[RMDB]
RNA sequence: GGGAACGACUCGAGUAGAGUCGAAAACCCUGUCUCCUCGGUUCUUCUUCGAUCCGGACCGGCUCAUCUCGGCAAGAGGCGGCAGUCCUCAGUGCUCUUACUCUUUCCUAUAAAGAGGAGACUGCUGUAAAGGAAGGCUUCGGCCUUCCUAAAAGAAACAACAACAACAAC
Reactivity to DMS in 0.01 (KOAc 150mM, MgCl2 10mM, bicine 150mM(pH8.5), 24C), signal-to-noise 5, nucleotides 027 to 129: c020c020c030u060g000u020c050u030c040c000u000c040g020g040u000u030c080u030u010c070u000u000c150g010a090u030c030c030g020g040a120c110c120g000g070c050u090c050a080u050c040u000c020g050g000c180a100a060g030a120g010g000c040g000g080c070a030g030u040c020c010u040c070a030g050u000g050c230u000c020u010u000a100c020u000c000u010u000u000c080c130u010a130u050a100a100a030g030a020g160g000a040g010a030c030u000g000c010u020g010u070a120a160
Reactivity to 2A3 in 0.01 (KOAc 150mM, MgCl2 10mM, bicine 150mM(pH8.5), 24C), signal-to-noise 4, nucleotides 027 to 129: c000c000c000u030g000u010c010u000c000c000u040c000g070g020u020u020c010u120u030c020u060u110c080g060a060u040c000c030g010g020a060c000c000g000g000c000u030c020a140u030c010u020c020g040g000c060a080a040g020a050g030g020c000g040g000c020a060g050u060c000c000u050c010a050g020u050g040c020u000c000u050u050a270c000u010c000u020u090u030c050c050u080a060u170a180a060a020g030a000g000g000a000g000a000c000u010g000c030u010g000u080a050a070
Structure probing data (DMS and 2A3) for a 170-nucleotide construct.
Conditions: 150 mM KOAc, 10 mM MgCl2 and 150 mM bicine (pH 8.5), 24 C.
The data come from the RNA Mapping Database (RMDB), library 15KLIB.